[RMDB]
RNA sequence: GGGAACGACUCGAGUAGAGUCGAAAAACGAGUCCGUACGCGGACUCGAAGGGCCCCAGAAGACCAAGGGGCCCAAACCUACCACUCAUUAGAUGCGUGGAAAUCACUAGGUGAUACGUCACCUAGAACACGCUUUUAAGCUUCGGCUUAAAAGCAAGCUGUUGAAUAACUUCGGUUAUUCAACAGCAAAAGAAACAACAACAACAAC
Reactivity to 2A3 in 0.01 (KOAc 150mM, MgCl2 10mM, bicine 150mM(pH8.5), 24C), signal-to-noise 2, nucleotides 027 to 156: a010c000g000a000g000u000c020c000g030u010a010c240g000c010g070g000a000c000u000c000g000a000a010g000g010g000c000c000c000c000a110g090a300a070g070a100c070c050a150a080g000g010g010g010c000c000c030a000a000a000c000c000u050a030c000c000a000c000u060c000a010u110u120a080g110a210u060g010c020g000u000g000g050a000a090a100u270c110a080c070u010a000g000g000u000g040a020u020a060c300g060u000c020a000c000c000u000a000g000a020a020c090a010c060g000c000u000u000u000u000a000a000g000c000u010u180c300g070g000c000u030u010a000a000a000a000g000c000a000a020

The record gives the reactivity of an RNA of 207 nucleotides to 2A3. The RNA was probed in 150 mM KOAc, 10 mM MgCl2 and 150 mM bicine (pH 8.5) at 24 C. The 2A3 profile rests on 1,247 reads. Source: RMDB library M2RFPK, as collected in RNAgym.